This 207-nucleotide RNA was probed chemically with 2A3.
Values cover nucleotides 27 to 156.
As a SHAPE reagent, 2A3 marks flexible, mostly unpaired nucleotides at the ribose 2'-OH.
Source: RMDB library M2RFPK, as collected in RNAgym.
The reactions ran in a buffer of 150 mM KOAc, 10 mM MgCl2 and 150 mM bicine (pH 8.5), at 24 C.

[RMDB]
RNA sequence: GGGAACGACUCGAGUAGAGUCGAAAAGAGCGAUUAGACAAAGGGGUAGAGCUACAUAUUAGAUAGCUGUAUAAUCGUUCAAGUUACAUCUAAACAUCUUCAAUAUUUAUUACUUACUUUCCUUUCUGCCAGAGUACGGUAUUCGUACCGUACUCAAUCGGCAUAACUACUUCGGUAGUUAUGCCGAAAAAGAAACAACAACAACAAC
Reactivity to 2A3 in 0.01 (KOAc 150mM, MgCl2 10mM, bicine 150mM(pH8.5), 24C), signal-to-noise 2, nucleotides 027 to 156: g010a000g000c000g010a020u000u000a040g030a090c080a090a140a060g040g010g000g070u030a030g020a010g000c020u010a010c030a100u280a240u210u140a130g200a300u000a000g050c000u020g010u030a010u010a010a000u000c000g000u000u000c020a010a000g000u010u050a040c010a110u080c070u100a090a100a080c050a100u010c040u180u080c060a170a180u070a220u240u140u160a130u140u180a100c020u050u020a040c020u020u060u050c000c000u090u130u140c050u050g040c050c000a080g000a000g010u000a000c000g020g010u000a020u020u090c030g020u000a010c000c000g030u000a000c000u000c000a000a000